[RMDB]
RNA sequence: GGGAACGACUCGAGUAGAGUCGAAAAUGGACUUUUUACAGUUCCUACUUAACCGGUUUUAACGCUGUUUUAUUGGCGCAAAGGUUUACGGAUAAACAACUAAUAAUUAAACCUUUUGUGUGCGAAAAUUGGACGUUUAGGUUCGCCUAAACGUCAAGGAUGAUGUUUUGUUCGCAAAACAUCAUCCAAAAGAAACAACAACAACAAC
Reactivity to 2A3 in 0.01 (KOAc 150mM, MgCl2 10mM, bicine 150mM(pH8.5), 24C), signal-to-noise 1, nucleotides 027 to 156: u070g000g040a040c050u010u190u000u130u080a080c110a010g030u180u030c000c000u010a120c000u120u120a110a020c000c030g010g060u060u020u030u140a020a000c010g000c040u020g140u070u050u110u130a140u160u220g090g000c010g000c020a000a000a000g010g000u000u030u000a010c060g020g010a030u160a190a180a020c070a020a000c050u220a080a150u070a080a060u110u080a020a020a010c000c000u070u040u070u070g030u000g030u050g010c050g040a050a000a020a070u160u130g070g000a000c000g000u000u000u000a000g000g010u020u060c180g030c090c000u000a010a010a000c010g020u000c000a000a000